[RMDB]
RNA sequence: GGGAACGACUCGAGUAGAGUCGAAAAGUUAUGGAAAACGUCUUAGCUACCACUACAACAACAAUGCUGGACGGUGAUGGUUCGACUUACUCGAAACCAUCACGUAGUGGUAGUCGUUGCCAUUCAAGUGAUGUGAAAUAUUCGUAUUUCACAUCACAAAAGAAACAACAACAACAAC
Reactivity to 2A3 in 0.01 (KOAc 150mM, MgCl2 10mM, bicine 150mM(pH8.5), 24C), signal-to-noise 9, nucleotides 027 to 126: g050u080u070a020u080g030g010a120a160a020a040c020g040u040c110u150u150a050g010c000u000a000c000c010a000c010u010a000c010a150a000c010a040a010c020a120a240u240g090c090u130g100g100a080c120g040g000u000g000a000u010g000g020u010u010c010g000a050c080u130u230a080c050u090c010g020a060a030a040c010c000a000u010c000a000c020g000u000a000g000u000g000g000u000a000g000u000c000g000u000u010g040c000c010a030u070u100c080a160a020
Reactivity to DMS in 0.01 (KOAc 150mM, MgCl2 10mM, bicine 150mM(pH8.5), 24C), signal-to-noise 9, nucleotides 027 to 126: g010u010u000a040u010g010g000a080a060a050a020c010g010u010c130u010u010a160g010c010u000a010c000c000a010c000u000a010c010a120a070c140a060a080c190a090a100u000g020c110u000g000g000a070c170g020g010u000g000a010u000g000g000u000u000c010g000a020c260u010u000a090c260u000c000g010a030a020a030c000c000a000u000c000a000c010g010u010a010g010u000g000g010u000a010g010u000c040g010u000u000g010c010c010a070u000u000c140a090a160
The record gives the reactivity of an RNA of 177 nucleotides to 2A3 and DMS.
It was measured as part of the RMDB library M2PK90.
For DMS the reverse transcriptase was MarathonRT.